[RMDB]
RNA sequence: GGGAACGACUCGAGUAGAGUCGAAAAAAUCAUGGAACAGCGAGAUAGGUUAUGGCUUGUUCACUAGCGUGGACGGCGAGGACUUAUGGGACACCACUGUAGUGGUGGACUUUGCAAAACAAACCGUCAAGGAUACAGGCAACGAACAUUCGUUCGGCAUGCGGUAGGUGUUCGCACCUACCGCAUGAAAAGAAACAACAACAACAAC
Reactivity to 2A3 in 0.01 (KOAc 150mM, MgCl2 10mM, bicine 150mM(pH8.5), 24C), signal-to-noise 1, nucleotides 027 to 156: a010a000u190c040a050u050g080g000a060a010c050a020g050c030g120a100g020a170u030a070g000g000u120u030a110u250g110g000c100u140u240g000u020u010c000a020c140u100a130g090c030g050u080g020g000a000c030g000g010c020g000a000g000g000a000c000u120u010a030u090g080g030g000a000c000a000c000c010a000c040u240g020u300a220g000u050g000g000u000g000g000a000c000u110u000u190g000c030a000a000a030a150c010a000a060a030c010c020g050u090c090a020a020g020g000a000u030a100c030a020g090g000c000a000a010c090g020a000a000c010a070u110u220c170g020u010u010c000g050g000
An RNA of 207 nucleotides, treated with 2A3 and read out base by base. Values cover nucleotides 27 to 156. It was measured as part of the RMDB library OK3TST.